[RMDB]
RNA sequence: GGGAACGACUCGAGUAGAGUCGAAAAGUGCACUAAUUAUGAUCUUUCAAUUAUUAAUGCACGUAUUAAAGCUAAGCACAUUGUCUAUGUAGGAGAUCCAGCACAGUUGCCAGCUCCUAGGACUUUGAGACCGAGAUGUUCGCAUCUCGGAAAAGAAACAACAACAACAAC
Reactivity to 2A3 in 0.01 (KOAc 150mM, MgCl2 10mM, bicine 150mM(pH8.5), 24C), signal-to-noise 9, nucleotides 027 to 129: g010u000g000c000a000c010u010a010a010u020u100a020u050g090a070u110c150u080u300u120c110a150a100u050u030a010u010u010a030a000u010g000c000a000c010g010u040a130u050u300a130a120a020g070c110u100a080a020g060c030a040c000a090u020u020g010u000c010u030a130u140g180u070a020g000g010a020g010a040u030c050c040a000g030c020a070c030a150g120u210u090g050c030c030a000g020c020u020c000c000u010a030g000g020a020c000u010u010u020g060a080g010a020
Reactivity to DMS in 0.01 (KOAc 150mM, MgCl2 10mM, bicine 150mM(pH8.5), 24C), signal-to-noise 9, nucleotides 027 to 129: g030u020g010c020a010c070u020a010a030u000u000a040u000g010a060u040c220u010u060u020c040a050a090u030u030a030u020u000a020a050u010g000c020a030c000g020u010a050u000u040a080a100a120g020c090u040a080a100g050c080a130c060a050u000u000g020u030c030u050a120u050g040u030a000g050g000a060g020a080u030c120c120a090g020c040a090c150a100g030u050u010g040c030c070a110g010c040u000c010c000u030a040g000g020a050c070u020u020u000g000a050g040a150